[RMDB]
RNA sequence: GGGAACGACUCGAGUAGAGUCGAAAAUACGCGGUAAAUCCUAGGCUCUAUCCAACCGGAUAAUGUGGCAGCGUCCAAGCCUACGCUACUCGCAACCCGAAGUCUUGGGCUGCGCUCGACUAUCCUAGGACAUGUAGUUCUUCGGAACUACAUGUCCAAAAGAAACAACAACAACAAC
Reactivity to DMS in 0.01 (KOAc 150mM, MgCl2 10mM, bicine 150mM(pH8.5), 24C), signal-to-noise 1, nucleotides 027 to 126: u030a110c040g040c080g000g000u000a170a050a160u010c000c000u000a050g000g040c000u000c060u010a000u010c000c010a070a230c280c300g000g010a000u000a000a030u020g020u000g000g040c100a090g000c110g010u000c020c000a100a060g060c130c020u000a000c060g110c000u000a010c230u020c000g000c050a040a140c100c000c000g000a100a070g020u000c000u000u050g040g000g020c070u000g000c100g030c120u000c000g000a000c000u020a160u000c000c080u000a060
Reactivity to 2A3 in 0.01 (KOAc 150mM, MgCl2 10mM, bicine 150mM(pH8.5), 24C), signal-to-noise 3, nucleotides 027 to 126: u200a010c030g000c040g030g000u060a060a090a070u060c010c020u030a040g020g000c000u030c030u040a040u010c020c000a120a230c050c110g000g000a020u010a020a060u200g060u050g120g000c050a020g000c010g030u010c010c010a030a000g010c000c000u010a070c020g020c020u030a040c000u030c090g060c050a070a030c020c000c030g010a080a030g070u050c060u030u090g000g030g040c060u100g000c040g000c020u020c030g060a040c020u090a060u090c010c010u020a070